[RMDB]
RNA sequence: GGGAACGACUCGAGUAGAGUCGAAAAGUCCGUUCCUUCGGGAACGGACAAAGGGAAACCAAGCAGUAGGUUCGUGUAGCUACAGCAAAAAUAAACACGAAAAAAGCCCUCUGUUCGCAGAGGGCAAGUAUAGCUCAUUGUUCGCAAUGAGCUAUACAAAAGAAACAACAACAACAAC
Reactivity to 2A3 in 0.01 (KOAc 150mM, MgCl2 10mM, bicine 150mM(pH8.5), 24C), signal-to-noise 4, nucleotides 027 to 126: g010u000c000c000g000u000u000c010c010u020u060c190g080g000g010a000a000c000g000g000a000c000a000a010a000g030g000g030a050a040a030c010c010a040a020g100c030a030g030u040a000g010g030u030u030c010g000u020g010u050a030g060c010u020a010c030a100g090c050a050a130a030a020a010u150a050a070a010c020a010c020g000a090a020a000a010a030a000g000c000c000c000u000c000u010g050u050u070c220g000c050a000g000a000g000g010g000c000a000a000
Reactivity to DMS in 0.01 (KOAc 150mM, MgCl2 10mM, bicine 150mM(pH8.5), 24C), signal-to-noise 4, nucleotides 027 to 126: g020u000c000c000g020u000u000c010c000u000u010c240g040g000g000a010a000c000g000g000a000c000a000a040a100g010g020g010a110a090a270c010c010a110a130g000c130a120g010u000a010g010g010u000u000c030g020u000g010u000a050g000c010u000a030c030a110g010c150a020a060a040a040a060u000a060a050a060c020a030c020g030a000a060a070a070a110a150g000c000c000c000u000c000u000g020u000u020c100g010c010a030g000a020g000g010g020c010a000a000

An RNA of 177 nucleotides, treated with 2A3 and DMS and read out base by base. 2A3 adducts were read by reverse transcription with SuperScript II with manganese. For 2A3, 12,547 sequencing reads were counted. Values cover nucleotides 27 to 126.